RNA sequence: GGGAACGACUCGAGUAGAGUCGAAAAGUAUUACCUGAUGCAGGCAAUAGCGACAUAAACAUAGAAAACGAAUAACCAAACGGUGAGAAGACAAUAUUAUCAUCUUCAUUCCCAUCUUGAAUAUUUUUAUACGCUACUAUACCGGCAUUGGUAAAUCGGGUGCUAUUAAUUUCGAUUAAUAGCACCCAAAAGAAACAACAACAACAAC
Reactivity to 2A3 in 0.01 (KOAc 150mM, MgCl2 10mM, bicine 150mM(pH8.5), 24C), signal-to-noise 3, nucleotides 027 to 156: g070u070a070u110u050a020c030c080u070g110a020u020g000c000a010g030g000c030a050a080u010a020g020c020g070a090c030a050u050a030a050a010c010a030u090a030g080a090a100a010a030c080g060a160a040u100a150a050c090c080a100a070a060c110g010g020u080g020a030g000a040a000g010a000c060a090a040u070a110u270u170a060u180c030a010u020c000u020u010c010a040u070u060c000c030c000a030u020c010u030u060g030a040a000u040a030u070u020u000u000u010a050u010a010c010g050c000u020a010c010u070a050u060a150c000c020g030g000c040a020u010u030g000g000u020a040a010a080u170c090
Reactivity to DMS in 0.01 (KOAc 150mM, MgCl2 10mM, bicine 150mM(pH8.5), 24C), signal-to-noise 1, nucleotides 027 to 156: g010u010a130u000u000a060c030c010u030g050a040u020g050c010a000g010g090c030a060a070u000a020g000c000g020a080c040a040u000a060a040a080c060a100u020a080g000a160a140a090a200c200g030a090a110u000a080a110c060c040a060a050a050c010g010g000u020g030a080g000a050a130g000a090c030a100a150u040a140u000u000a140u010c160a110u000c040u000u020c030a190u000u010c030c040c000a110u000c060u000u000g020a150a110u000a040u000u000u000u000u000a040u040a120c070g020c020u000a000c050u000a030u020a020c000c040g000g030c000a020u000u000g010g000u000a000a020a230u010c100
Source: RMDB library OK3TST, as collected in RNAgym. The record gives the reactivity of an RNA of 207 nucleotides to 2A3 and DMS. The 2A3 profile rests on 1,646 reads. 2A3 adducts were read by reverse transcription with SuperScript II with manganese. Values cover nucleotides 27 to 156. The reactions ran in a buffer of 150 mM KOAc, 10 mM MgCl2 and 150 mM bicine (pH 8.5), at 24 C.